Chemical mapping of a 177-nucleotide RNA with 2A3 and DMS.
The reactions ran in a buffer of 150 mM KOAc, 10 mM MgCl2 and 150 mM bicine (pH 8.5), at 24 C.
For 2A3, 22,514 sequencing reads were counted.
Source: RMDB library OK1LIB, as collected in RNAgym.
For DMS the reverse transcriptase was MarathonRT.
Values cover nucleotides 27 to 126.

RNA sequence: GGGAACGACUCGAGUAGAGUCGAAAAAGAACUAUGUUAAAGCAUGAAGCCUCCACGUGCUUGCCCAAGUGAACGGAAACGGAAAAGCAUAGUUCAGAGCUGAAGGAGGCACGGCUCAAAAUAAAAAGCUGCUACAUCUGUUCGCAGAUGUAGUAGCAAAAGAAACAACAACAACAAC
Reactivity to 2A3 in 0.01 (KOAc 150mM, MgCl2 10mM, bicine 150mM(pH8.5), 24C), signal-to-noise 6, nucleotides 027 to 126: a000g010a000a000c000u000a000u010g030u050u090a150a050a020g000c000a010u020g060a050a020g000c000c000u000c000c000a000c000g010u000g000c020u060u090g040c000c000c010a060a060g110u040g070a100a010c060g020g050a070a030a020c020g030g050a040a050a010a000g000c000a000u000a000g000u000u000c020a020g000a000g000c000u010g020a110a010g040g000a000g000g010c000a000c000g000g000c000u000c010a040a040a020a010u120a020a060a030a010a000
Reactivity to DMS in 0.01 (KOAc 150mM, MgCl2 10mM, bicine 150mM(pH8.5), 24C), signal-to-noise 3, nucleotides 027 to 126: a070g010a010a000c010u010a000u000g000u000u010a060a070a080g000c000a020u000g030a060a140g020c010c000u010c000c020a300c010g010u000g000c010u030u020g010c060c010c010a100a140g000u020g010a130a050c130g000g010a080a050a070c100g010g020a060a060a070a100g000c000a000u010a010g000u010u000c000a050g020a000g000c000u000g010a060a120g040g010a010g000g010c010a230c060g000g030c000u000c020a170a080a040a110u040a060a080a060a080a080